[RMDB]
RNA sequence: GGGAACGACUCGAGUAGAGUCGAAAAAGGCUUGCGUCAACACACUUGGUCCAUCGGACCAUGGCGCAGGCAGCUCCUGGCCUGGCAAGACCUUUGACCACGAAGCCUCCGUUUUGGCCGGGGAUGCUAUCCCAGGAUCCUUCGGGAUCCUGGGAUAAAAAGAAACAACAACAACAAC
Reactivity to 2A3 in 0.01 (KOAc 150mM, MgCl2 10mM, bicine 150mM(pH8.5), 24C), signal-to-noise 2, nucleotides 027 to 126: a000g110g030c000u000u000g000c010g020u020c020a100a080c030a030c070a060c190u050u050g000g000u000c010c020a240u170c300g000g000a000c010c000a010u030g000g000c010g000c000a010g000g000c010a000g010c020u040c000c000u000g020g000c000c010u000g010g000c000a020a020g020a160c010c000u030u070u100g030a080c000c010a040c110g020a000a010g030c030c010u040c010c040g060u000u040u170u020g030g000c000c030g000g000g000g010a070u140g010c010
Reactivity to DMS in 0.01 (KOAc 150mM, MgCl2 10mM, bicine 150mM(pH8.5), 24C), signal-to-noise 2, nucleotides 027 to 126: a000g010g000c000u000u000g000c000g000u000c020a030a060c300a040c190a110c200u050u000g000g000u000c000c000a120u000c300g010g020a010c000c000a030u020g000g010c080g000c000a000g000g030c000a040g000c060u040c020c000u000g000g010c000c000u000g000g010c110a120a030g000a110c300c020u000u020u000g000a220c230c150a110c050g000a060a050g060c090c000u000c150c060g000u050u010u070u020g000g020c060c000g020g010g000g000a040u060g030c030